This 177-nucleotide RNA was probed chemically with DMS and 2A3. Values cover nucleotides 27 to 126. For DMS, 3,656 sequencing reads were counted. As a SHAPE reagent, 2A3 marks flexible, mostly unpaired nucleotides at the ribose 2'-OH. 2A3 adducts were read by reverse transcription with SuperScript II with manganese.

RNA sequence: GGGAACGACUCGAGUAGAGUCGAAAAGAAGUCCGACGAGAUCGCGGCUGGGGCUUAGGACCCCACUCCUGCGAGACAGGAGUAAUCCUAAACAGGGUUUUCACCCUUCCUUUAGUUUCCUUCCUCUAGAUAUAACAGUGUUCGCACUGUUAUAUCUAAAAGAAACAACAACAACAAC
Reactivity to DMS in 0.01 (KOAc 150mM, MgCl2 10mM, bicine 150mM(pH8.5), 24C), signal-to-noise 3, nucleotides 027 to 126: g000a090a060g020u010c000c010g000a110c050g010a190g010a150u000c030g010c050g010g000c100u000g010g010g010g000c090u000u010a020g000g000a090c000c020c020c030a020c010u000c010c000u000g000c010g010a130g020a230c010a030g000g010a000g010u010a100a050u000c020c000u000a010a020a120c230a030g000g000g020u000u010u010u000c150a100c010c010c010u000u010c020c030u000u010u000a090g000u000u000u000c020c030u000u000c020c020u010c110u010
Reactivity to 2A3 in 0.01 (KOAc 150mM, MgCl2 10mM, bicine 150mM(pH8.5), 24C), signal-to-noise 5, nucleotides 027 to 126: g060a030a000g030u010c020c010g030a080c030g100a140g070a260u140c050g010c040g020g000c020u020g010g010g000g000c020u020u030a020g040g050a120c010c000c000c000a000c000u000c000c000u010g010c070g210a180g030a100c000a000g000g000a000g000u010a000a020u020c010c000u000a020a020a010c180a050g010g020g020u060u120u230u290c120a060c000c010c000u020u060c030c010u070u100u130a040g010u030u030u030c000c000u040u060c010c020u040c030u010